[RMDB]
RNA sequence: GGGAACGACUCGAGUAGAGUCGAAAAGAUAUGGACGGUCUUGGUGGAUACAGCGCUCGAUAAGUCCCAUUCGGAAACGAAUGAAGGACUUUUGACGAGCGGUAUCCACCAAGACCGUCCUAAGUCAGUCCCAAGAUAAGUUCGCUUAUCUUGGGACAAAAGAAACAACAACAACAAC
Reactivity to DMS in 0.01 (KOAc 150mM, MgCl2 10mM, bicine 150mM(pH8.5), 24C), signal-to-noise 2, nucleotides 027 to 126: g010a040u000a300u010g010g000a010c000g000g000u000c000u000u000g000g040u010g000g000a000u020a010c020a200g000c050g030c020u000c000g030a150u010a020a010g010u010c000c010c010a030u000u000c010g000g000a170a080a280c000g010a000a010u010g020a150a150g000g010a000c010u000u000u000u010g020a170c030g000a040g040c000g010g000u000a010u000c000c000a000c030c000a000a000g000a000c000c000g010u000c000c000u000a000a080g010u000c060a210

The record gives the reactivity of an RNA of 177 nucleotides to DMS. The reactions ran in a buffer of 150 mM KOAc, 10 mM MgCl2 and 150 mM bicine (pH 8.5), at 24 C. In probing experiments dimethyl sulfate is read out at A N1 and C N3, which are open when not base-paired.